Annotation:
Structure probing data (DMS and 2A3) for a 177-nucleotide construct. The data come from the RNA Mapping Database (RMDB), library OK2TRN.

[RMDB]
RNA sequence: GGGAACGACUCGAGUAGAGUCGAAAACAGGAUCACUGGCGCAGUACGAUCCAUAGUACGUGUAGGCCAUCUGAUCCUACAUGAUCGAUCGGCCGAUCGAUCGUACAGUGCGGCGCGGCCGGCCGGCUCAUCAGUCGGACUUCGGUCCGACUGAUGAAAAAGAAACAACAACAACAAC
Reactivity to DMS in 0.01 (KOAc 150mM, MgCl2 10mM, bicine 150mM(pH8.5), 24C), signal-to-noise 1, nucleotides 027 to 126: c170a060g030g020a010u000c020a010c070u000g010g020c010g040c050a170g010u000a010c010g000a130u010c260c180a090u020a160g010u000a010c040g000u000g030u000a070g010g020c070c010a000u020c090u020g030a030u000c000c030u000a030c160a080u000g000a090u000c000g010a020u000c050g010g030c080c060g000a050u000c010g010a010u010c020g020u000a050c100a110g010u000g010c040g000g000c000g010c020g010g000c000c030g000g020c040c010g010g010c090
Reactivity to 2A3 in 0.01 (KOAc 150mM, MgCl2 10mM, bicine 150mM(pH8.5), 24C), signal-to-noise 1, nucleotides 027 to 126: c040a010g000g010a010u010c000a000c030u000g000g000c020g000c030a000g000u020a000c000g030a060u000c100c040a050u080a040g000u020a000c200g030u030g060u180a140g180g210c000c000a000u000c040u030g000a050u010c010c020u010a030c040a030u160g040a120u020c000g000a000u000c050g020g080c090c130g080a060u040c020g010a110u030c000g020u040a130c110a080g100u070g160c000g020g000c010g010c040g010g000c000c000g060g030c030c000g030g010c030
For DMS, 1,178 sequencing reads were counted.